[RMDB]
RNA sequence: GGGAACGACUCGAGUAGAGUCGAAAAGAUAUGGACAUGUGACACCUAAUGCGUUGAAAUCGGAAACGAUGGAGCAUUAGGGUGCAAUGCAUGUCCUAAGUCAAACUGCGAACUUCGGUUCGCAGAAUCCUGUACCUUGGUUCGCCAAGGUACAGGAAAAAGAAACAACAACAACAAC
Reactivity to 2A3 in 0.01 (KOAc 150mM, MgCl2 10mM, bicine 150mM(pH8.5), 24C), signal-to-noise 2, nucleotides 027 to 126: g010a020u090a070u150g000g000a010c010a010u010g030u140g120a070c010a020c050c010u010a010a000u010g010c000g300u300u050g060a020a010a020u030c000g000g000a140a060a050c010g000a020u030g000g030a050g000c000a010u010u010a040g060g010g030u020g010c020a020a120u120g000c010a010u010g000u010c050c000u040a100a000g040u000c020a200a080a010c010u000g000c000g010a010a000c000u060u140c300g170g010u020u020c010g000c000a000g000a000a040
Reactivity to DMS in 0.01 (KOAc 150mM, MgCl2 10mM, bicine 150mM(pH8.5), 24C), signal-to-noise 2, nucleotides 027 to 126: g030a040u000a300u020g000g020a010c000a010u000g000u000g040a170c010a020c000c000u020a000a000u000g000c000g000u020u030g000a130a130a040u010c020g010g000a100a080a200c040g020a030u000g000g020a040g030c000a010u000u000a010g020g020g020u000g050c090a130a060u000g000c010a010u000g000u000c030c000u000a000a050g010u000c030a140a100a150c000u000g030c000g010a010a000c000u000u000c200g020g000u000u000c000g000c000a000g000a020a060
The record gives the reactivity of an RNA of 177 nucleotides to 2A3 and DMS. The RNA was probed in 150 mM KOAc, 10 mM MgCl2 and 150 mM bicine (pH 8.5) at 24 C. It was measured as part of the RMDB library TTRDEL. For 2A3, 2,662 sequencing reads were counted. For DMS the reverse transcriptase was MarathonRT. For 2A3 the reverse transcriptase was SuperScript II with manganese.